Chemical mapping of a 177-nucleotide RNA with DMS and 2A3. DMS adducts were read by reverse transcription with MarathonRT. The 2A3 profile rests on 3,271 reads.
RNA sequence: GGGAACGACUCGAGUAGAGUCGAAAAGAUAUGGAUGAUCAGGCUUUUGACGCUCGAUGGGUCGGAAACGACCCUAAGAGCGAUAAGCCUGCGUAUCCUAAGUCAAACGCGGGGUUCGCCCCGCGAACCGCUAAACAUUGUUCGCAAUGUUUAGCGGAAAAGAAACAACAACAACAAC
Reactivity to DMS in 0.01 (KOAc 150mM, MgCl2 10mM, bicine 150mM(pH8.5), 24C), signal-to-noise 2, nucleotides 027 to 126: g010a000u000a300u000g000g020a020u000g000a070u000c000a000g010g000c000u000u000u010u000g030a210c070g020c000u000c000g000a300u010g010g000g040u000c010g010g000a100a080a170c000g010a020c000c000c000u010a010a150g000a010g010c010g000a030u000a000a000g010c000c000u010g020c230g040u010a030u000c000c000u000a070a160g010u000c060a040a130a190c040g020c000g000g000g000g030u000u000c240g020c000c000c010c000g010c000g020a010a120
Reactivity to 2A3 in 0.01 (KOAc 150mM, MgCl2 10mM, bicine 150mM(pH8.5), 24C), signal-to-noise 1, nucleotides 027 to 126: g040a050u080a030u130g010g010a020u020g000a030u110c020a010g000g000c000u090u030u190u300g260a170c080g010c010u020c020g000a060u110g000g010g000u010c010g000g020a000a080a040c000g000a010c000c030c000u010a020a010g000a010g010c010g010a010u000a000a010g010c020c010u000g010c010g000u030a000u000c000c000u040a160a040g100u060c050a110a090a110c050g000c000g000g000g000g070u070u070c230g120c020c010c040c020g010c000g000a020a030
Background: Values cover nucleotides 27 to 126. The reactions ran in a buffer of 150 mM KOAc, 10 mM MgCl2 and 150 mM bicine (pH 8.5), at 24 C.